[RMDB]
RNA sequence: GGGAACGACUCGAGUAGAGUCGAAAACAGAAUGAUGAAGAGACCAUUAAUUUGUCUCCGCCGUCGUUUUAACAUUGAGGUAUAACAACGCCGAGUCAUCGUUUCGAUCGUCAUUUGUUUCGUUGGCUAACGAGCUAUACUUCGGUAUAGCUCGUUAAAAAGAAACAACAACAACAAC
Reactivity to 2A3 in 0.01 (KOAc 150mM, MgCl2 10mM, bicine 150mM(pH8.5), 24C), signal-to-noise 3, nucleotides 027 to 126: c030a010g120a050a050u060g020a000u000g010a020a050g010a010g000a020c020c020a070u130u300a150a200u170u150u080g000u000c000u000c010c030g150c070c050g050u070c020g020u020u060u000u040a130a050c040a050u160u210g070a040g010g120u190a080u060a070a050c060a000a000c000g010c000c020g000a010g000u030c020a020u040c040g050u010u050u060c110g020a170u100c010g020u000c020a050u020u010u090g060u000u050u000c160g040u080u020g000g010c010
Reactivity to DMS in 0.01 (KOAc 150mM, MgCl2 10mM, bicine 150mM(pH8.5), 24C), signal-to-noise 3, nucleotides 027 to 126: c130a150g010a010a010u000g000a030u040g020a300a200g010a040g000a020c030c220a090u010u000a110a110u070u000u020g030u000c000u000c010c050g010c190c040g000u000c030g030u000u030u020u000a070a160c070a110u030u040g000a130g000g030u020a030u000a060a030c090a040a090c030g020c140c100g010a060g030u020c030a040u010c100g010u010u000u000c000g010a060u010c040g010u000c040a080u000u020u020g000u000u010u000c150g000u030u010g000g000c140